[RMDB]
An RNA of 177 nucleotides, treated with 2A3 and DMS and read out base by base.
RNA sequence: GGGAACGACUCGAGUAGAGUCGAAAACACGACUGAGGCGUACGAUCCUACAACCUUGCCCAUGCGAGGCCCCCUGUUAACGUACGCGAACCGGGUACAUGACGGCGUUGGCCCCCGCAUAGCGGGAAAAUAGCUACCCUUUCGAGGGUAGCUAUUUAAAAGAAACAACAACAACAAC
Reactivity to 2A3 in 0.01 (KOAc 150mM, MgCl2 10mM, bicine 150mM(pH8.5), 24C), signal-to-noise 4, nucleotides 027 to 126: c090a020c050g140a030c050u100g070a030g130g000c010g030u040a020c020g010a050u050c030c000u080a060c060a120a210c010c020u020u050g000c000c030c060a080u220g010c000g010a020g000g030c020c000c000c000c020u010g020u030u050a070a010c020g000u010a000c010g030c010g090a040a030c030c020g050g000g000u040a060c040a070u140g060a030c020g000g030c050g020u040u080g080g010c000c000c020c000c010g010c050a190u160a080g030c010g000g020g000a030
Reactivity to DMS in 0.01 (KOAc 150mM, MgCl2 10mM, bicine 150mM(pH8.5), 24C), signal-to-noise 5, nucleotides 027 to 126: c100a100c120g020a060c100u020g000a120g000g010c010g000u010a030c040g000a100u000c020c010u000a070c240a080a110c050c000u000u020g020c000c160c170a110u010g020c020g000a050g010g020c020c010c040c020c010u010g010u000u020a060a060c000g020u000a020c020g010c020g020a080a080c090c040g000g000g020u010a050c060a100u010g000a070c080g010g010c110g000u010u010g000g020c050c050c000c010c010g010c020a100u030a120g000c010g000g010g010a050
For DMS, 11,172 sequencing reads were counted. The reactions ran in a buffer of 150 mM KOAc, 10 mM MgCl2 and 150 mM bicine (pH 8.5), at 24 C.